Chemical mapping of a 177-nucleotide RNA with 2A3 and DMS.
RNA sequence: GGGAACGACUCGAGUAGAGUCGAAAACGCACUCAGCGACCCGAACGCCCAUCGGAUGCGCAAUUUUCUCGCAAACGCACCACAAGCAGGCAGCAAGUCGCAAAGAGCCAAGUACGGGACAGCAGGCUAGCAAGAUGGAGUUCGCUCCAUCUUGCUAAAAAGAAACAACAACAACAAC
Reactivity to 2A3 in 0.01 (KOAc 150mM, MgCl2 10mM, bicine 150mM(pH8.5), 24C), signal-to-noise 3, nucleotides 027 to 126: c020g000c040a060c020u090c030a020g020c010g070a090c000c000c010g000a070a040c050g020c020c000c000a080u100c030g050g060a060u100g030c060g010c060a020a050u120u050u080u060c050u020c010g120c030a070a080a080c030g000c000a050c010c010a010c000a040a040g050c020a030g080g010c000a030g000c000a040a080g050u020c000g000c020a050a090a020g050a010g010c000c000a040a000g030u010a080c040g020g000g020a010c020a020g050c010a020g110g000c030
Reactivity to DMS in 0.01 (KOAc 150mM, MgCl2 10mM, bicine 150mM(pH8.5), 24C), signal-to-noise 2, nucleotides 027 to 126: c040g010c010a180c120u000c060a050g020c000g010a130c020c020c020g000a070a120c070g020c000c000c000a140u030c000g000g000a090u010g040c020g020c150a070a050u010u010u030u020c030u000c030g000c140a040a160a120c120g000c020a100c040c080a020c210a060a070g060c000a040g050g000c000a070g030c090a200a060g060u050c020g000c060a110a030a000g000a130g010c040c070a060a090g020u000a060c050g000g030g000a080c060a070g020c050a130g000g010c190
Source: RMDB library OK1LIB, as collected in RNAgym. The RNA was probed in 150 mM KOAc, 10 mM MgCl2 and 150 mM bicine (pH 8.5) at 24 C. The DMS profile rests on 2,160 reads. 2A3 adducts were read by reverse transcription with SuperScript II with manganese. Values cover nucleotides 27 to 126.